[RMDB]
RNA sequence: GGGAACGACUCGAGUAGAGUCGAAAAGACGUGUUGCCAAGCACUGGGCCUUGCGAUGCAGGAGCACGAUUUUGAACAAGUCGCGCUGAUCGCCAAUAUCACCAGCGCGCAACCUCAUGCAGGGCGAAGGGGUAUUUAGGUUCGCCUAAAUACCCCUAAAAGAAACAACAACAACAAC
Reactivity to 2A3 in 0.01 (KOAc 150mM, MgCl2 10mM, bicine 150mM(pH8.5), 24C), signal-to-noise 2, nucleotides 027 to 126: g070a020c020g010u010g060u050u110g210c030c040a040a040g000c040a000c100u120g040g170g090c000c000u000u070g020c050g070a020u010g010c070a040g000g020a010g000c040a010c080g080a080u090u040u100u180g060a080a060c050a050a070g090u080c030g000c010g050c000u010g020a070u060c060g060c080c060a160a060u050a050u180c020a010c080c010a000g010c000g000c000g040c040a010a020c000c030u020c030a030u070g000c020a010g050g000g030c000g000a050
Reactivity to DMS in 0.01 (KOAc 150mM, MgCl2 10mM, bicine 150mM(pH8.5), 24C), signal-to-noise 2, nucleotides 027 to 126: g010a110c080g010u000g000u000u000g010c010c090a100a070g000c020a060c090u000g010g000g030c020c000u000u000g000c000g000a120u010g030c120a090g010g000a060g010c060a070c020g000a170u000u000u000u000g010a120a130c210a040a050g040u000c020g010c010g000c000u000g030a070u010c170g000c050c100a130a090u000a170u000c110a060c040c030a000g000c000g000c030g000c050a070a040c080c040u000c040a050u000g030c000a050g000g000g030c050g000a110